[RMDB]
RNA sequence: GGGAACGACUCGAGUAGAGUCGAAAAACUACCACUUUUUAUCAUUAUCUAAACAUGACCUCCCGCGACUAUCCCCAGAUCAUCUUUCUGACACUCUUCAAUCGGAUCUACCCGCAGAUGAGACGGGAACAUCUCCCAAAUUCGUUUGGGAGAUGUUAAAAGAAACAACAACAACAAC
Reactivity to DMS in 0.01 (KOAc 150mM, MgCl2 10mM, bicine 150mM(pH8.5), 24C), signal-to-noise 5, nucleotides 027 to 126: a060c100u020a130c010c010a090c120u010u010u010u010u020a060u010c050a040u000u010a080u030c060u020a090a110a080c110a060u010g000a070c050c010u000c020c010c020g020c090g020a070c080u000a090u010c010c030c000c050a060g020a050u020c070a060u030c050u000u000u010c020u000g000a080c110a090c040u000c020u000u000c070a060a120u010c030g020g000a060u010c030u000a210c080c010c010g010c140a070g000a090u030g020a090g000a090c040g010g000g000
Reactivity to 2A3 in 0.01 (KOAc 150mM, MgCl2 10mM, bicine 150mM(pH8.5), 24C), signal-to-noise 9, nucleotides 027 to 126: a000c080u170a110c030c020a090c070u140u120u080u080u150a120u090c060a070u060u200a070u120c080u180a080a140a110c080a090u100g030a070c000c000u020c000c010c010g030c020g030a030c030u090a100u110c010c000c000c010a010g010a060u040c010a010u000c040u030u130u020c030u040g050a040c020a010c050u060c000u060u080c050a080a180u060c030g050g020a040u000c020u050a090c000c010c020g010c030a010g020a160u150g030a060g030a080c020g000g000g010
The record gives the reactivity of an RNA of 177 nucleotides to DMS and 2A3. For DMS, 7,817 sequencing reads were counted. For 2A3 the reverse transcriptase was SuperScript II with manganese. Source: RMDB library OK1LIB, as collected in RNAgym.